[RMDB]
RNA sequence: GGGAACGACUCGAGUAGAGUCGAAAAGCCUCGGAAUCGACCCGGUUCUUUCCGAUGCUGACGACGGCGGCCGGAACGGUGAAGCCGGCCACGGUGCUGGUGCUCGGCGUCGGCGUGGCCGGCCUGCGCCGUAUUUCCCGUUCGCGGGAAAUACGGCAAAAGAAACAACAACAACAAC
Reactivity to 2A3 in 0.01 (KOAc 150mM, MgCl2 10mM, bicine 150mM(pH8.5), 24C), signal-to-noise 2, nucleotides 027 to 126: g020c010c010u010c050g030g010a060a080u100c060g040a050c000c130c050g130g030u190u050c040u040u040u040c000c010g000a030u010g010c020u020g020a050c050g000a010c040g050g000c020g010g000c010c000g040g040a030a030c060g000g140u020g040a020a000g010c030c000g010g000c010c000a010c000g000g090u170g010c020u060g050g030u080g010c120u090c070g150g000c010g030u060c030g040g060c030g030u010g060g000c030c000g000g000c010c010u030g010c030
Reactivity to DMS in 0.01 (KOAc 150mM, MgCl2 10mM, bicine 150mM(pH8.5), 24C), signal-to-noise 1, nucleotides 027 to 126: g000c010c000u000c020g050g000a080a050u020c190g000a000c060c130c090g000g000u000u030c060u000u000u010c060c000g020a110u000g000c040u010g020a080c090g000a060c070g020g000c100g000g000c010c000g000g000a250a060c080g020g000u000g040a220a080g000c000c000g000g010c000c000a040c040g020g010u040g010c020u010g020g000u030g020c080u060c120g010g020c000g010u000c020g000g040c010g020u000g000g000c000c030g000g020c000c000u000g020c200
Overview:
The record gives the reactivity of an RNA of 177 nucleotides to 2A3 and DMS. The 2A3 profile rests on 1,037 reads. It was measured as part of the RMDB library OK1LIB. The reactions ran in a buffer of 150 mM KOAc, 10 mM MgCl2 and 150 mM bicine (pH 8.5), at 24 C. Values cover nucleotides 27 to 126.